The record gives the reactivity of an RNA of 177 nucleotides to 2A3 and DMS. High 2A3 reactivity points to a flexible backbone, as in loops and unpaired stretches. The RNA was probed in 150 mM KOAc, 10 mM MgCl2 and 150 mM bicine (pH 8.5) at 24 C. For 2A3, 1,069 sequencing reads were counted. Values cover nucleotides 27 to 126. For 2A3 the reverse transcriptase was SuperScript II with manganese.
RNA sequence: GGGAACGACUCGAGUAGAGUCGAAAAGCAGCUGCGCCAUAGCGUGGAGGCCAGGCAGCUUCUGGAUGCAGAGUAUGAGCAGCUGGAGACAGAUCUGAAGACGCUGCGCACAGAGGUCAUGCGCACGCAGCCACGGUCAAUUCGUUGACCGUGGCUGAAAAGAAACAACAACAACAAC
Reactivity to 2A3 in 0.01 (KOAc 150mM, MgCl2 10mM, bicine 150mM(pH8.5), 24C), signal-to-noise 1, nucleotides 027 to 126: g090c010a000g130c000u000g000c130g000c140c010a070u090a040g010c040g080u070g000g010a000g110g000c040c040a090g090g180c090a030g000c000u010u040c050u050g180g050a140u110g080c030a020g040a060g290u110a050u070g040a020g000c000a010g000c020u030g000g020a000g030a020c090a020g100a100u040c030u100g080a040a040g050a070c070g000c100u030g000c000g000c010a050c010a030g240a060g050g030u070c020a020u000g000c000g000c000a000c020g030
Reactivity to DMS in 0.01 (KOAc 150mM, MgCl2 10mM, bicine 150mM(pH8.5), 24C), signal-to-noise 1, nucleotides 027 to 126: g010c060a010g020c020u010g000c000g000c160c060a030u000a090g010c000g090u000g000g000a050g030g000c020c020a070g000g020c140a120g000c020u000u000c000u000g000g000a040u020g010c020a090g000a110g040u000a070u000g010a290g000c020a020g020c030u000g010g000a140g000a150c090a030g000a060u000c020u000g000a140a090g000a110c000g010c150u000g000c030g010c120a080c040a130g000a150g000g000u020c090a170u000g000c020g010c060a040c110g010